An RNA of 177 nucleotides, treated with 2A3 and read out base by base.

RNA sequence: GGGAACGACUCGAGUAGAGUCGAAAACUGGGGCUUAGGACCCCACUCCUGCGAGACAGGAGUAAUCCUAAACAGGGUUUUCACCCUUCCUUUAGUUUCCUUCCUCUCCUGGAGAGGUCUUCUGCCCGUGUUACGCUAGGUUCGCCUAGCGUAACACAAAAGAAACAACAACAACAAC
Reactivity to 2A3 in 0.01 (KOAc 150mM, MgCl2 10mM, bicine 150mM(pH8.5), 24C), signal-to-noise 1, nucleotides 027 to 126: c010u000g000g000g000g040c050u050u010a000g030g020a030c020c010c050c000a030c000u000c000c020u030g020c100g220a110g040a030c120a060g030g010a000g000u020a000a020u000c000c000u010a010a000a070c300a020g030g050g000u040u090u300u300c170a080c000c020c000u050u040c000c000u070u030u040a020g040u040u080u030c020c000u040u130c000c000u040c000u010c040c060u070g030g000a020g020a000g000g000u000c050u030u010c030u060g020c010c000c020
The RNA was probed in 150 mM KOAc, 10 mM MgCl2 and 150 mM bicine (pH 8.5) at 24 C. It was measured as part of the RMDB library VIROID.